The record gives the reactivity of an RNA of 177 nucleotides to DMS. The RNA was probed in 150 mM KOAc, 10 mM MgCl2 and 150 mM bicine (pH 8.5) at 24 C.
RNA sequence: GGGAACGACUCGAGUAGAGUCGAAAAGAUAUGGACCGGCAAGGGAGCCUCCGGUCGGAAACGACCGAGAGGCAUCGAUCUUGCGGUCCUAAGUCAAAAGUAUAGUAAGGUUCGCCUUACUAUACAACCUAUGAGGUCAGUUCGCUGACCUCAUAGGAAAAGAAACAACAACAACAAC
Reactivity to DMS in 0.01 (KOAc 150mM, MgCl2 10mM, bicine 150mM(pH8.5), 24C), signal-to-noise 1, nucleotides 027 to 126: g000a010u010a010u010g000g000a010c010c000g030g010c020a020a030g010g010g010a010g000c000c000u000c000c010g010g020u000c000g000g040a010a020a020c010g010a030c000c020g010a060g000a040g020g010c010a020u000c150g020a000u010c000u010u000g000c000g000g010u000c000c010u000a000a070g010u000c000a070a120a130a140g000u000a000u000a000g000u000a000a000g010g010u010u010c270g030c000c010u010u000a000c000u000a000u000a000c010a090a160